[RMDB]
RNA sequence: GGGAACGACUCGAGUAGAGUCGAAAAGGACCUAAUAACUUUACGGCACAGGGAAAAAUCGCAGUAGUAGUCUGCCAGCAGGCGGCUGGCUUCCUUCUUGGAACGGACACGUGCGAUGUCCAUCUUCUUGAUGACGUCCUCUGCGCGACACGGUGGACCGUGAAAUAACGUUCGCGUUAUUUCACGGAAAAGAAACAACAACAACAAC
Reactivity to DMS in 0.01 (KOAc 150mM, MgCl2 10mM, bicine 150mM(pH8.5), 24C), signal-to-noise 2, nucleotides 027 to 156: g020g000a180c030c010u000a120a120u000a100a080c050u000u010u000a110c080g020g010c050a070c030a040g020g000g040a060a060a080a100a110u000c020g030c020a060g010u000a120g030u000a100g000u000c010u000g030c000c030a080g020c030a150g040g030c160g020g000c010u010g010g020c050u000u000c010c000u000u000c100u010u000g000g000a040a030c100g020g010a060c010a040c070g000u000g030c090g020a050u000g000u000c070c020a050u000c010u010u000c130u000u000g000a070u020g000a080c070g000u000c010c010u000c040u000g020c000g050c030g030a100c050a070c020g000g010u010g020g000a200
Reactivity to 2A3 in 0.01 (KOAc 150mM, MgCl2 10mM, bicine 150mM(pH8.5), 24C), signal-to-noise 4, nucleotides 027 to 156: g070g020a050c030c010u080a100a080u150a130a070c060u090u110u220a070c060g040g000c030a000c010a040g000g010g060a070a060a030a020a010u030c020g000c020a010g010u220a020g010u040a060g030u050c030u050g010c000c020a010g000c020a040g180g220c150g060g010c000u010g000g000c000u020u010c010c000u060u180c070u140u240g010g000a030a020c060g020g020a010c000a010c040g030u060g000c030g020a020u060g010u020c130c040a040u000c020u240u060c070u100u230g010a030u030g010a020c010g060u050c020c010u060c020u050g000c060g010c020g040a020c040a020c100g060g010u060g040g030a050

An RNA of 207 nucleotides, treated with DMS and 2A3 and read out base by base. Values cover nucleotides 27 to 156. The reactions ran in a buffer of 150 mM KOAc, 10 mM MgCl2 and 150 mM bicine (pH 8.5), at 24 C.